[RMDB]
RNA sequence: GGGAACGACUCGAGUAGAGUCGAAAAGACGCUAUUGCGCACGCACUGAAGAUUUCUAAGGGUGAAGUCCAGCUGAUUUUAGAGUUGCCCGAUAUGGAUUCGUUUUGAGAUUAAUGCAGCGCGCACGAGCCGUGGCUGAGUUCGCUCAGCCACGGCUAAAAGAAACAACAACAACAAC
Reactivity to 2A3 in 0.01 (KOAc 150mM, MgCl2 10mM, bicine 150mM(pH8.5), 24C), signal-to-noise 1, nucleotides 027 to 126: g150a020c090g080c200u300a150u170u110g000c000g080c000a000c000g120c000a110c000u000g000a260a000g200a240u000u000u030c030u030a010a010g000g000g000u110g000a170a000g120u140c030c000a000g000c060u000g170a230u000u000u290u000a050g000a050g000u000u060g090c000c000c000g090a000u000a000u090g060g000a000u110u110c080g090u000u000u000u110g060a180g000a110u000u150a000a260u020g000c080a050g030c000g000c000g020c080a000c060g020